[RMDB]
RNA sequence: GGGAACGACUCGAGUAGAGUCGAAAAGCUCAUUUCGGCAAAGGGCGGCGGUCCUUAGUUCUCUUACUCUUUUCUGUAAAGAGGAGACUGUAGGAUCCGCCGCCCAAGCCCGAACUGAGCCAAGUCCAGACUGUUCACUUCGGUGAACAGAAAAGAAACAACAACAACAAC
Reactivity to 2A3 in 0.01 (KOAc 150mM, MgCl2 10mM, bicine 150mM(pH8.5), 24C), signal-to-noise 4, nucleotides 027 to 129: g000c000u010c000a000u000u000u000c000g000g030c000a040a110a250g140g000g000c000g000g000c000g000g010u000c000c000u010u000a040g040u250u020c030u000c010u030u140a110c030u020c010u050u050u060u070c170u240g280u300a000a040a000g000a000g010g010a010g010a010c010u070g090u080a000g000g000a010u000c020c010g000c010c000g000c030c000c010a000a010g000c010c000c000g000a000a000c020u000g010a000g000c000c010a060a000g010u000c010c000a030g040a040
Reactivity to DMS in 0.01 (KOAc 150mM, MgCl2 10mM, bicine 150mM(pH8.5), 24C), signal-to-noise 6, nucleotides 027 to 129: g000c010u020c010a030u000u000u000c070g000g000c080a110a300a190g000g000g000c000g000g020c000g050g020u000c000c000u000u010a000g000u040u050c030u020c020u030u080a300c050u010c000u010u020u020u060c290u060g040u020a050a000a010g020a030g030g000a030g030a040c030u040g000u030a010g000g000a010u020c040c000g000c040c020g000c010c000c010a010a020g030c140c020c000g000a000a000c050u020g020a030g040c000c000a060a130g000u030c010c020a030g030a210
Chemical mapping of a 170-nucleotide RNA with 2A3 and DMS.
For DMS the reverse transcriptase was MarathonRT.
The data come from the RNA Mapping Database (RMDB), library 15KLIB.